[RMDB]
RNA sequence: GGGAACGACUCGAGUAGAGUCGAAAAGAUAUGGACGACCUCAGAGGCCUGCUCCCCACCUCGGAAACGAGAGGCAGGAACUACCUCUGGGUCGUCCUAAGUCAAAACAGUAUGUUCGCAUACUGAACGCUCAUAGAAUCUUCGGAUUCUAUGAGCGAAAAGAAACAACAACAACAAC
Reactivity to 2A3 in 0.01 (KOAc 150mM, MgCl2 10mM, bicine 150mM(pH8.5), 24C), signal-to-noise 1, nucleotides 027 to 126: g020a030u050a030u150g000g010a000c010g000a000c000c030u300c040a010g000a000g110g050c030c000u020g050c020u110c050c040c040c040a150c040c020u000c000g000g010a030a090a000c000g000a000g000a050g000g080c000a000g010g040a010a020c040u160a060c070c000u000c000u010g020g010g000u000c000g000u000c000c000u020a010a000g000u000c010a000a010a070a060c000a000g030u020a010u030g060u090u150c300g040c130a000u000a020c030u000g000a060a040
Reactivity to DMS in 0.01 (KOAc 150mM, MgCl2 10mM, bicine 150mM(pH8.5), 24C), signal-to-noise 2, nucleotides 027 to 126: g000a080u010a300u000g000g030a030c010g030a020c020c010u000c020a010g000a030g010g010c010c020u000g010c020u000c080c010c030c050a300c090c000u010c000g000g000a090a100a170c000g000a020g010a080g000g000c010a000g030g020a070a010c070u040a300c040c020u000c000u000g000g010g020u000c000g000u000c000c000u000a010a080g000u010c010a090a040a110a280c010a020g010u020a010u000g000u000u030c170g040c000a000u000a010c000u010g020a120a110